[RMDB]
RNA sequence: GGGAACGACUCGAGUAGAGUCGAAAAAGUUAUGAGUUCGCUCAUAACUACAGCGAAAGGCGCUCGGACCCGCAGUGCGCCGAAGGCAUCCCAGCCUGUCCAAGUUGGUAUAUUUCGAUAUACCAAAAUCUAUCCUCCUAUUCGUAGGAGGAUAGAUAAAAGAAACAACAACAACAAC
Reactivity to 2A3 in 0.01 (KOAc 150mM, MgCl2 10mM, bicine 150mM(pH8.5), 24C), signal-to-noise 5, nucleotides 027 to 126: a000g010u000u000a010u020g000a000g030u030u110c190g050c060u010c000a000u000a010a000c000u010a040c040a020g070c050g150a180a040a050g010g000c010g020c020u030c040g130g080a190c010c000c040g030c080a030g020u010g010c000g000c000c000g000a000a000g000g010c010a040u040c020c010c010a010g010c010c020u020g020u020c040c030a130a060g130u060u020g010g020u000a000u000a000u010u120u080c180g040a000u000a000u000a000c000c000a030a020a010
Reactivity to DMS in 0.01 (KOAc 150mM, MgCl2 10mM, bicine 150mM(pH8.5), 24C), signal-to-noise 8, nucleotides 027 to 126: a020g010u000u000a000u000g010a020g020u000u010c220g020c000u000c000a010u000a000a000c000u000a060c170a110g020c080g000a060a090a130g010g010c010g010c000u000c060g000g000a120c030c050c040g010c100a160g010u000g000c000g020c000c000g000a090a020g010g000c020a090u000c010c020c020a190g010c020c010u000g000u010c070c100a110a110g010u000u000g000g000u000a000u000a010u000u000u010c160g010a030u000a010u000a010c000c000a010a010a080
Background: Structure probing data (2A3 and DMS) for a 177-nucleotide construct. For 2A3, 10,605 sequencing reads were counted. The data come from the RNA Mapping Database (RMDB), library M2PK50. DMS (dimethyl sulfate) methylates the pairing face of unpaired adenines and cytosines.